[RMDB]
RNA sequence: GGGAACGACUCGAGUAGAGUCGAAAAGGCAGUGGAAGGGCCUGUGGGGAUUUGGAGAGCUGGCCUGGGUCUCUGAAGUGAUAGUGACAGCUGCUUGUCAAUCACGGUGCACAUUUAGUGCUGGGGGCUUAUCUUCGCAAUUCGUUGCGAAGAUAAGAAAAGAAACAACAACAACAAC
Reactivity to 2A3 in 0.01 (KOAc 150mM, MgCl2 10mM, bicine 150mM(pH8.5), 24C), signal-to-noise 4, nucleotides 027 to 126: g010g000c030a010g030u050g050g090a060a020g030g000g010c010c050u070g010u110g010g020g000g050a100u100u100u160g100g020a090g010a020g030c010u040g030g020c000c000u060g020g030g050u020c020u030c010u080g060a150a030g030u020g020a040u070a110g200u060g030a000c010a020g040c070u150g030c080u150u030g020u020c020a010a030u030c010a010c030g060g030u070g010c000a020c000a020u190u240u190a060g000u010g020c020u030g000g000g000g000g010
Reactivity to DMS in 0.01 (KOAc 150mM, MgCl2 10mM, bicine 150mM(pH8.5), 24C), signal-to-noise 4, nucleotides 027 to 126: g010g020c060a060g020u000g010g010a150a120g000g010g010c040c040u000g020u010g010g010g000g010a150u010u010u010g020g010a100g000a100g010c090u000g000g010c050c040u000g000g010g010u000c020u000c040u000g010a080a140g010u000g000a030u010a090g010u010g010a030c030a050g010c190u010g020c120u010u000g000u000c010a060a040u000c020a030c020g010g010u010g020c020a020c030a150u010u000u010a090g010u000g000c020u010g000g000g000g000g000
Annotation: This 177-nucleotide RNA was probed chemically with 2A3 and DMS. Conditions: 150 mM KOAc, 10 mM MgCl2 and 150 mM bicine (pH 8.5), 24 C. For DMS, 6,644 sequencing reads were counted.